Notes:
An RNA of 177 nucleotides, treated with 2A3 and DMS and read out base by base. The RNA was probed in 150 mM KOAc, 10 mM MgCl2 and 150 mM bicine (pH 8.5) at 24 C.
RNA sequence: GGGAACGACUCGAGUAGAGUCGAAAAGAUCACUGUCGGGGUGUGGCCGGUGCGCUGCAGCCAGUGGGCGAGCGCCGCUCCUGCCACGCCGGCACCGCUAAUCGCUACUUUCACACUGCAAUUGUGCUACGGAAUGAUAGUUCGCUAUCAUUCCGUAAAAAGAAACAACAACAACAAC
Reactivity to 2A3 in 0.01 (KOAc 150mM, MgCl2 10mM, bicine 150mM(pH8.5), 24C), signal-to-noise 7, nucleotides 027 to 126: g020a030u090c020a000c100u040g030u050c040g040g090g030g130u190g010u010g040g000c010c020g000g000u020g000c010g000c020u120g040c010a030g000c010c030a180g210u300g220g090g000c020g010a210g020c010g000c000c010g000c010u000c000c000u000g000c000c000a010c000g000c000c000g000g000c020a010c010c040g010c070u050a050a050u080c040g000c070u090a080c040u120u150u110c060a050c020a020c070u100g020c030a050a190u180u120g070u070g030c030
Reactivity to DMS in 0.01 (KOAc 150mM, MgCl2 10mM, bicine 150mM(pH8.5), 24C), signal-to-noise 8, nucleotides 027 to 126: g000a070u010c080a070c110u000g010u000c030g020g010g000g020u010g020u000g010g010c010c110g010g000u000g010c010g010c060u000g020c010a300g000c010c000a210g020u010g010g020g030c000g000a080g030c020g020c300c050g000c010u000c010c010u000g000c010c010a030c010g000c010c010g000g010c010a050c080c080g000c080u000a060a050u000c060g010c060u010a080c100u000u000u010c060a110c080a080c070u000g010c080a070a100u010u000g010u000g010c110